Structure probing data (DMS and 2A3) for a 177-nucleotide construct. DMS adducts were read by reverse transcription with MarathonRT. 2A3 adducts were read by reverse transcription with SuperScript II with manganese. Source: RMDB library OK1LIB, as collected in RNAgym. Reactivities are given for positions 27 through 126.
RNA sequence: GGGAACGACUCGAGUAGAGUCGAAAACUGCCCUUUGUUUUCGCUGGCUUACAGAUUGACUGGGUCCAAUUAGUUCGUCUUUUAAUCUGGGGGUGAAUUUGACUUUUGUUAGGGCGGAAAACAAACGCGAUAAGUUUACUUUCGAGUAAAUUUAUCGAAAAGAAACAACAACAACAAC
Reactivity to DMS in 0.01 (KOAc 150mM, MgCl2 10mM, bicine 150mM(pH8.5), 24C), signal-to-noise 7, nucleotides 027 to 126: c170u030g020c010c010c010u010u010u000g000u000u000u000u000c020g020c020u010g010g010c020u000u030a080c050a040g000a050u000u010g010a040c030u000g000g010g000u000c050c060a080a090u020u030a080g000u010u000c040g010u020c010u000u000u010u010a020a060u010c030u020g000g010g000g000g020u000g010a070a070u020u030u010g010a070c050u010u020u020u010g020u010u000a070g010g010g010c010g000g000a030a010a030a020c030a010a040a050c180g000
Reactivity to 2A3 in 0.01 (KOAc 150mM, MgCl2 10mM, bicine 150mM(pH8.5), 24C), signal-to-noise 9, nucleotides 027 to 126: c040u110g040c000c000c000u010u020u020g010u010u010u000u010c020g000c030u030g110g020c010u040u040a030c010a020g070a140u110u090g040a070c030u070g030g000g000u000c020c020a060a060u060u030a060g080u060u040c020g090u040c010u050u150u050u130a110a200u070c070u080g020g010g010g010g020u040g040a020a030u050u020u060g030a030c000u030u060u080u060g040u040u030a030g010g010g020c030g020g030a010a030a000a010c020a010a030a000c070g000